[RMDB]
RNA sequence: GGGAACGACUCGAGUAGAGUCGAAAAGCUGUAUAUUCAUAUUCUGCCUAUCGAUGAUAUAUCAAUCUCGAAGUUACAGUUAUGAACUUCCGUCCUGGGAUAAAUCGAGAGUCGAUGAUUAGAGAUAAUAAAAUCACACACAAAUUGAGUGAUACUGUCCCUAGCAUUAGUUCGCUAAUGCUAGGGAAAAAGAAACAACAACAACAAC
Reactivity to DMS in 0.01 (KOAc 150mM, MgCl2 10mM, bicine 150mM(pH8.5), 24C), signal-to-noise 1, nucleotides 027 to 156: g010c070u010g040u000a050u000a090u000u030c060a000u000a070u010u030c000u000g070c100c070u000a250u000c000g030a090u000g020a140u010a110u000a130u010c130a110a090u000c020u000c020g000a040a010g000u000u000a050c000a130g020u000u000a080u000g020a030a030c000u010u000c000c100g040u000c040c020u000g020g000g010a080u010a030a050a020u000c010g000a140g010a060g010u000c020g010a050u010g030a090u000u000a110g030a190g060a010u020a030a110u000a010a080a110a090u000c010a000c040a080c000a110c000a080a120a110u030u000g000a080g060u030g020a100u000a090c080u000g000
Reactivity to 2A3 in 0.01 (KOAc 150mM, MgCl2 10mM, bicine 150mM(pH8.5), 24C), signal-to-noise 2, nucleotides 027 to 156: g020c050u020g060u100a080u010a020u140u020c000a000u020a050u210u000c020u000g000c000c000u160a280u070c020g020a020u150g050a000u080a010u050a060u160c050a060a040u030c030u000c020g040a020a000g020u020u050a020c000a010g020u010u010a000u020g020a000a010c070u030u040c030c030g020u050c020c020u050g020g050g000a020u030a120a160a020u050c020g020a000g050a030g250u050c030g020a010u050g010a000u040u030a020g040a000g070a140u240a120a010u210a090a100a110a010u250c110a020c000a010c080a000c110a150a120a190u110u060g060a140g060u000g000a010u040a070c050u130g030
The data come from the RNA Mapping Database (RMDB), library OK3TST. This 207-nucleotide RNA was probed chemically with DMS and 2A3. For DMS, 1,432 sequencing reads were counted. DMS adducts were read by reverse transcription with MarathonRT.